[RMDB]
RNA sequence: GGGAACGACUCGAGUAGAGUCGAAAACCCGCGGGCCGGCUACUCUUCUUUCCCUUCUCUCGUCUUCCUCGGUCAACCUCCUGAGUUCCUCUUCUUCCUCCCUGCUGAGGUUCUUUCCUCCCGCGGAUCUCGAUAUAUUGUUCGCAAUAUAUCGAGAAAAAGAAACAACAACAACAAC
Reactivity to DMS in 0.01 (KOAc 150mM, MgCl2 10mM, bicine 150mM(pH8.5), 24C), signal-to-noise 2, nucleotides 027 to 126: c030c000c010g040c090g000g000g010c130c010g000g040c040u010a060c090u000c030u020u010c030u000u000u010c020c000c000u000u010c030u010c040u010c050g000u000c030u010u000c020c010u000c040g030g010u000c040a080a140c060c030u000c030c020u000g000a140g020u000u000c020c010u000c030u000u000c030u010u000c040c020u000c030c020c040u010g010c070u000g010a070g010g000u000u000c040u000u010u000c030c040u000c000c000c010g030c100g030g000a120
Chemical mapping of a 177-nucleotide RNA with DMS. DMS (dimethyl sulfate) methylates the pairing face of unpaired adenines and cytosines. It was measured as part of the RMDB library 15KREP. Conditions: 150 mM KOAc, 10 mM MgCl2 and 150 mM bicine (pH 8.5), 24 C. DMS adducts were read by reverse transcription with MarathonRT.